[RMDB]
An RNA of 177 nucleotides, treated with 2A3 and DMS and read out base by base. The data come from the RNA Mapping Database (RMDB), library OK2TRN. For 2A3 the reverse transcriptase was SuperScript II with manganese. The DMS profile rests on 1,024 reads.
RNA sequence: GGGAACGACUCGAGUAGAGUCGAAAACAAGCUCAAGGCAUGUCCGGACGCUCGGGUGACGAUCAACGGCUACACCGACAACACCGGCAGCGAAGGUAUCAAUAUCCCGUUGAGCGCUCAGCGAGCCGUGCUUGGACAUUUUCGAAUGUCCAAGCACAAAAGAAACAACAACAACAAC
Reactivity to 2A3 in 0.01 (KOAc 150mM, MgCl2 10mM, bicine 150mM(pH8.5), 24C), signal-to-noise 2, nucleotides 027 to 126: c010a040a100g010c010u020c040a050a040g100g000c110a100u090g070u000c040c020g060g020a040c070g030c070u000c010g040g000g120u020g030a040c030g020a090u090c050a110a140c000g000g040c010u080a040c040a100c060c050g050a030c020a170a010c020a080c060c000g060g000c030a010g010c050g050a100a010g080g010u070a060u150c040a100a080u050a110u210c000c000c000g000u030u050g020a000g010c020g000c020u020c060a030g080c040g050a010g000c000c070
Reactivity to DMS in 0.01 (KOAc 150mM, MgCl2 10mM, bicine 150mM(pH8.5), 24C), signal-to-noise 2, nucleotides 027 to 126: c140a120a090g010c050u020c030a080a100g030g020c070a130u020g000u000c000c010g000g000a170c100g010c030u000c020g020g000g010u000g000a080c080g000a160u020c080a060a040c060g000g020c070u010a100c110a080c040c020g010a080c090a060a060c220a170c070c020g000g000c070a030g020c020g010a140a090g000g010u010a080u000c060a060a090u010a140u000c100c000c010g000u000u010g000a050g000c020g000c100u000c030a150g000c080g030a130g030c000c120